[RMDB]
The record gives the reactivity of an RNA of 177 nucleotides to DMS and 2A3. The RNA was probed in 150 mM KOAc, 10 mM MgCl2 and 150 mM bicine (pH 8.5) at 24 C. The DMS profile rests on 3,814 reads. DMS adducts were read by reverse transcription with MarathonRT. Values cover nucleotides 27 to 126.

RNA sequence: GGGAACGACUCGAGUAGAGUCGAAAAUAUACAUCAGAAGUCGGCACAACUCCCGACUCGCGGUGAGCGAUGCAGCGUAGCGCGAGCUACGCAGCUGCUGUGCGGAGGGCUAGCAAAAGCUAGCCAACAUGACGACCAGUUUCGACUGGUCGUCAUGAAAAGAAACAACAACAACAAC
Reactivity to DMS in 0.01 (KOAc 150mM, MgCl2 10mM, bicine 150mM(pH8.5), 24C), signal-to-noise 3, nucleotides 027 to 126: u050a110u040a140c040a100u020c030a090g010a110a060g040u000c000g000g040c290a090c060a090a140c270u040c150c010c000g030a050c050u000c020g000c300g000g020u020g000a120g000c000g010a060u020g030c010a050g010c000g020u000a030g000c000g020c300g000a230g030c000u000a020c020g030c000a000g000c030u030g000c020u010g010u010g010c160g010g050a130g000g000g020c000u000a000g000c000a150a100a060a070g000c000u010a000g010c000c000a010a090
Reactivity to 2A3 in 0.01 (KOAc 150mM, MgCl2 10mM, bicine 150mM(pH8.5), 24C), signal-to-noise 3, nucleotides 027 to 126: u200a010u030a030c050a070u080c070a020g100a140a010g060u000c010g010g050c110a060c010a300a300c130u020c020c000c010g030a020c000u000c020g020c020g020g040u050g020a040g000c040g120a180u160g010c070a030g000c000g000u000a000g000c000g000c060g030a010g000c000u000a000c000g000c000a000g010c000u010g000c010u020g040u050g020c050g020g080a080g080g030g000c000u000a000g000c000a000a050a150a240g000c020u000a000g000c000c000a000a020